An RNA of 177 nucleotides, treated with 2A3 and DMS and read out base by base. 2A3 is a SHAPE reagent: it acylates the 2'-hydroxyl of flexible nucleotides of all four kinds. For DMS the reverse transcriptase was MarathonRT. Conditions: 150 mM KOAc, 10 mM MgCl2 and 150 mM bicine (pH 8.5), 24 C. 2A3 adducts were read by reverse transcription with SuperScript II with manganese.
[RMDB]
RNA sequence: GGGAACGACUCGAGUAGAGUCGAAAAGAGUAGUAGUUCGCUACUACUCAAAGGCACAAAAGGCACUGUUCUAAAGUGCAUGGAACACGCCAAGUGCCCGUGAAAGUAAAUCCUUCGGGAUUUACAACAGCAGUGAUUAGUUCGCUAAUCACUGCUGAAAAGAAACAACAACAACAAC
Reactivity to 2A3 in 0.01 (KOAc 150mM, MgCl2 10mM, bicine 150mM(pH8.5), 24C), signal-to-noise 2, nucleotides 027 to 126: g010a010g000u000a000g000u000a000g010u010u060c210g040c080u000a010c000u010a000c000u000c000a070a020a000g000g000c010a030c020a030a170a040a100g040g000c020a010c110u020g000u040u010c010u100a150a010a130g270u290g100c010a040u100g000g000a000a010c000a000c030g010c020c020a080a040g020u000g000c000c000c000g060u090g180a130a040a000g000u000a000a020a000u000c000c000u020u060c190g100g000g030a010u010u000u000a030c010a060a010
Reactivity to DMS in 0.01 (KOAc 150mM, MgCl2 10mM, bicine 150mM(pH8.5), 24C), signal-to-noise 2, nucleotides 027 to 126: g000a010g050u000a010g010u000a010g000u000u010c220g020c010u000a000c010u000a000c000u000c000a000a090a090g030g000c010a010c000a090a040a140a200g020g010c000a070c130u000g010u000u000c010u010a020a050a120g010u000g030c200a060u000g010g000a070a020c010a070c210g000c000c020a100a300g000u000g000c010c000c060g000u010g000a090a120a120g000u000a000a000a010u000c000c000u000u010c100g010g020g010a010u000u000u010a010c000a070a130